Structure probing data (DMS and 2A3) for a 177-nucleotide construct. The data come from the RNA Mapping Database (RMDB), library M2PK50. High DMS reactivity at an A or C suggests that its Watson-Crick edge is free. Values cover nucleotides 27 to 126.

[RMDB]
RNA sequence: GGGAACGACUCGAGUAGAGUCGAAAACAAGUUGGCUUCGGCCAACUUGAAAUGAAUGGUAGACUGAGACCGCUAAACUCAGAUAACCAAAAAUAGCGGAAAAAAGAUCAGUGUUCGCACUGAUCAACUAAGUAACAUGGUUCGCCAUGUUACUUAGAAAAGAAACAACAACAACAAC
Reactivity to DMS in 0.01 (KOAc 150mM, MgCl2 10mM, bicine 150mM(pH8.5), 24C), signal-to-noise 5, nucleotides 027 to 126: c000a010a010g010u000u000g000g010c000u000u030c240g040g000c010c000a000a000c000u000u010g010a040a070a070u010g010a080a090u020g000g020u010a100g020a210c000u000g000a010g000a140c020c010g010c000u010a010a100a090c010u000c000a000g010a150u000a060a180c040c030a010a010a040a040a190u010a010g010c000g020g000a010a040a040a070a080a090g000a010u000c000a000g020u000g010u000u010c230g010c000a020c000u000g000a000u000c000a040a090
Reactivity to 2A3 in 0.01 (KOAc 150mM, MgCl2 10mM, bicine 150mM(pH8.5), 24C), signal-to-noise 6, nucleotides 027 to 126: c010a010a000g010u000u010g010g000c010u030u130c300g070g000c000c010a000a000c000u000u000g000a010a020a020u140g050a050a070u120g100g080u130a050g050a170c010u000g000a000g030a070c020c000g010c040u040a110a120a030c000u000c000a000g020a110u130a030a050c030c000a000a020a000a020a050u020a000g000c010g000g000a050a010a010a020a010a040g000a000u000c000a000g000u010g050u070u090c180g010c050a000c000u000g000a000u010c000a000a010